The data come from the RNA Mapping Database (RMDB), library OK3TST. Structure probing data (2A3 and DMS) for a 207-nucleotide construct. The reactions ran in a buffer of 150 mM KOAc, 10 mM MgCl2 and 150 mM bicine (pH 8.5), at 24 C. 2A3 adducts were read by reverse transcription with SuperScript II with manganese.

RNA sequence: GGGAACGACUCGAGUAGAGUCGAAAACGGGGGCACAUCUCCUGCCUCAGGAUGGUUCUGGAGAAUCUCAGUCUAUCUGGGCACAUGGCAAGACCACAGGAGAGCUUAUCUCACAGCAUCUGUGUCUGCAGCUGGCUAGAUCUCUCUACAGGGCAGGUAGUUGCUAAGAGUUCGCUCUUAGCAACUAAAAAGAAACAACAACAACAAC
Reactivity to 2A3 in 0.01 (KOAc 150mM, MgCl2 10mM, bicine 150mM(pH8.5), 24C), signal-to-noise 3, nucleotides 027 to 156: c050g010g000g020g000g040c040a040c000a160u020c040u010c010c000u010g000c000c010u110c060a020g100g010a090u110g070g000u120u000c000u090g050g010a040g000a060a050u020c010u030c040a050g050u010c040u100a090u040c010u050g040g000g000c010a010c000a130u180g040g000c030a110a030g060a150c020c020a080c120a120g040g060a080g020a000g020c090u190u180a120u130c040u020c040a050c030a060g010c030a070u050c070u030g010u010g010u030c040u150g040c020a000g010c020u050g030g000c000u010a000g000a040u010c010u000c000u000c010u190a060c040a040g020g010g020c000a000g000g040
Reactivity to DMS in 0.01 (KOAc 150mM, MgCl2 10mM, bicine 150mM(pH8.5), 24C), signal-to-noise 2, nucleotides 027 to 156: c110g010g010g030g040g030c100a080c050a220u000c010u000c020c020u010g010c010c010u010c030a090g000g000a100u010g020g000u000u000c040u010g040g000a130g020a060a080u000c010u010c100a080g040u010c050u000a060u000c040u010g000g040g000c030a020c070a070u000g000g010c040a130a140g000a300c030c050a180c110a160g040g010a030g010a070g030c170u000u010a090u000c060u010c050a120c060a140g010c040a130u010c050u000g000u000g010u010c000u000g030c040a060g070c120u010g000g030c030u000a040g010a030u010c050u000c000u000c010u010a050c080a050g000g040g030c010a030g030g020